The record gives the reactivity of an RNA of 177 nucleotides to DMS and 2A3. Conditions: 150 mM KOAc, 10 mM MgCl2 and 150 mM bicine (pH 8.5), 24 C. The 2A3 profile rests on 2,487 reads. It was measured as part of the RMDB library M2PK50. For DMS the reverse transcriptase was MarathonRT.
RNA sequence: GGGAACGACUCGAGUAGAGUCGAAAACACCCCGCGUUCGCGCGGGGUGAAACAGGUAGUUGCUAUCUCAAUUACCUGAACAGGCCAUGGACUGGAUAGCAAAAACUGAUGACUUCGGUCAUCAGAAGUACUGUUCAAACUUCGGUUUGAACAGUACAAAAGAAACAACAACAACAAC
Reactivity to DMS in 0.01 (KOAc 150mM, MgCl2 10mM, bicine 150mM(pH8.5), 24C), signal-to-noise 2, nucleotides 027 to 126: c000a010c000c000c000c010g020c000g040u000u000c130g080c020g070c000g000g010g020g000u000g010a000a020a120c000a000g010g010u000a030g030u000u000g000c060u000a030u000c090u000c060a100a030u000u000a000c000c000u000g030a100a070c130a080g000g000c010c020a100u000g010g000a110c200u010g010g000a030u000a010g000c200a050a080a050a050a140c000u000g010a010u000g000a000c000u000u000c150g010g000u000c000a000u000c000a000g010a040a130
Reactivity to 2A3 in 0.01 (KOAc 150mM, MgCl2 10mM, bicine 150mM(pH8.5), 24C), signal-to-noise 2, nucleotides 027 to 126: c010a010c010c000c010c000g030c000g000u020u060c250g000c000g010c010g080g030g010g000u000g000a020a000a000c000a000g010g010u010a000g030u030u060g000c040u080a060u180c050u010c130a020a180u040u010a020c010c000u000g000a040a020c020a050g080g000c030c030a080u150g060g070a030c090u060g010g010a050u060a050g050c040a070a010a030a070a090c000u000g000a010u000g000a010c000u020u010c270g080g000u030c000a000u010c000a000g010a020a000